RNA sequence: GGGAACGACUCGAGUAGAGUCGAAAACGAAGGACUUUCGAGUCCUUCGACUUACCGAGAAAGAUCCUCGGUAUAAAACUGGAACCCUUGGAAACAAGGGAAUGAACGGAAUCUUCGGAUUCCGUAACUACCGUUUGAAGUUCGCUUCAAACGGUAGAAAAGAAACAACAACAACAAC
Reactivity to 2A3 in 0.01 (KOAc 150mM, MgCl2 10mM, bicine 150mM(pH8.5), 24C), signal-to-noise 2, nucleotides 027 to 126: c020g000a020a010g010g010a000c020u060u080u140c230g050a060g000u000c010c000u000u010c000g010a010c000u020u010a000c010c010g000a000g030a040a230a020g070a050u050c000c000u000c000g020g030u020a030u000a010a030a000a010c060u090g170g040a060a100c020c000c000u000u010g030g010a040a040a020c010a000a010g020g010g000a000a030u070g010a010a010c010g000g000a000a000u000c020u040u070c220g030g000a010u000u020c000c000g000u000a000a010
Reactivity to DMS in 0.01 (KOAc 150mM, MgCl2 10mM, bicine 150mM(pH8.5), 24C), signal-to-noise 3, nucleotides 027 to 126: c020g000a000a000g010g000a010c000u000u000u010c110g010a040g010u000c000c010u000u000c000g000a070c100u000u010a010c000c020g000a020g000a150a120a100g010a140u000c030c010u000c000g020g030u000a000u010a040a040a120a080c120u000g000g000a120a150c010c010c010u000u000g000g000a140a080a190c000a010a000g000g000g000a030a020u020g010a170a010c000g000g000a010a010u000c000u000u000c200g040g000a010u000u000c000c000g020u000a000a100
Chemical mapping of a 177-nucleotide RNA with 2A3 and DMS. The data come from the RNA Mapping Database (RMDB), library M2PK50. The DMS profile rests on 2,584 reads. Conditions: 150 mM KOAc, 10 mM MgCl2 and 150 mM bicine (pH 8.5), 24 C. Reactivities are rounded to 0.1 and cut off at 0 and 3. The 2A3 profile rests on 3,697 reads.